[RMDB]
RNA sequence: GGGAACGACUCGAGUAGAGUCGAAAACUGGCUUAUUUCACAUAACAUGAUGUUUUUGAAGUUUCUCUAUGCUAUAGUAUGUGUCAGAGCUACAUUUUUAUGGAUGUUUAUUUUAUGGAUAUAUCAUGUUUUCUUUAUUCAUUCAUCUGUCUGUGGACCCUAAUGAGUAUUUCGAUACUCAUUAGGGAAAAGAAACAACAACAACAAC
Reactivity to DMS in 0.01 (KOAc 150mM, MgCl2 10mM, bicine 150mM(pH8.5), 24C), signal-to-noise 1, nucleotides 027 to 156: c060u010g000g020c030u000u000a080u000u010u000c040a090c020a060u010a070a070c050a120u000g010a060u000g000u000u000u000u010u000g000a030a300g010u000u000u000c000u000c060u000a090u020g020c050u040a090u000a110g020u000a050u010g020u000g010u010c050a090g010a150g000c030u010a070c030a070u000u000u000u000u000a090u030g020g000a050u000g000u000u000u000a060u020u020u000u010a040u000g000g000a060u010a060u000a040u010c020a070u000g010u000u020u000u010c030u010u000u000a100u020u000c020a040u010u000c040a060u000c040u000g010u000c070u000g060u000g060g000a260
Reactivity to 2A3 in 0.01 (KOAc 150mM, MgCl2 10mM, bicine 150mM(pH8.5), 24C), signal-to-noise 5, nucleotides 027 to 156: c020u040g030g030c030u080u110a120u160u280u110c040a040c020a050u160a170a010c020a060u070g020a040u050g120u040u120u050u070u110g070a090a040g020u030u100u010c020u000c020u050a060u110g030c010u040a020u020a160g070u050a050u130g050u010g030u040c030a010g000a010g100c010u080a020c020a070u130u130u080u160u190a050u110g010g010a000u020g030u020u070u050a060u120u160u070u050a040u110g010g010a000u030a010u020a040u250c030a010u050g060u030u090u020u050c010u010u130u060a080u070u040c020a010u000u050c000a030u040c040u100g080u040c030u060g030u090g070g040a050

The record gives the reactivity of an RNA of 207 nucleotides to DMS and 2A3. The DMS profile rests on 2,952 reads. For 2A3, 2,354 sequencing reads were counted. The data come from the RNA Mapping Database (RMDB), library OK3TST. Values cover nucleotides 27 to 156.